RNA sequence: GGGAACGACUCGAGUAGAGUCGAAAAUAAAACCGCGAAGAGAACCAAGCCUUGAGACACAAGGAGGGAAGUCUCAAGGCUUGGUUCUCGACUAGUGUCGAGUCGUUCCCAAUCCCUCCGCAAAAAACUAGAUACGUAAGUUCGCUUACGUAUCUAGAAAAGAAACAACAACAACAAC
Reactivity to DMS in 0.01 (KOAc 150mM, MgCl2 10mM, bicine 150mM(pH8.5), 24C), signal-to-noise 2, nucleotides 027 to 126: u010a090a050a120a150c150c090g030c160g020a130a090g020a130g000a020a010c010c000a010a050g000c010c000u000u020g050a000g000a000c000a040c240a080a100g000g000a040g000g010g000a050a180g000u000c000u000c000a000a020g000g000c000u020u000g000g000u000u000c000u000c010g000a020c040u010a060g000u000g000u000c000g000a020g020u000c000g020u000u000c000c030c010a010a050u000c010c010c000u000c000c020g050c200a010a030a070a040a050a110